The record gives the reactivity of an RNA of 177 nucleotides to DMS. The reactions ran in a buffer of 150 mM KOAc, 10 mM MgCl2 and 150 mM bicine (pH 8.5), at 24 C.
[RMDB]
RNA sequence: GGGAACGACUCGAGUAGAGUCGAAAAGAUAUGGACUGGUUAGAGCUUUUGACGGAACUUACCUCCCACUGAUGUCGGAAACGACAUUUGGGAGGUAAGUUCCGAUAAGCUCGACCAGUCCUAAGUCCACCAUCAGUGACUUCGGUCACUGAUGGUGAAAAGAAACAACAACAACAAC
Reactivity to DMS in 0.01 (KOAc 150mM, MgCl2 10mM, bicine 150mM(pH8.5), 24C), signal-to-noise 1, nucleotides 027 to 126: g000a130u000a300u000g000g010a030c000u010g000g020u000u000a040g040a010g030c000u000u020u010u010g040a300c170g010g010a000a030c000u010u010a010c020c000u000c000c020c000a070c300u000g020a010u000g030u010c020g070g000a120a100a250c020g000a010c030a010u000u000u000g000g000g010a010g010g050u000a000a000g010u000u000c000c020g030a000u010a020a020g000c000u010c000g000a020c000c010a000g010u000c000c000u000a010a060g020u000c040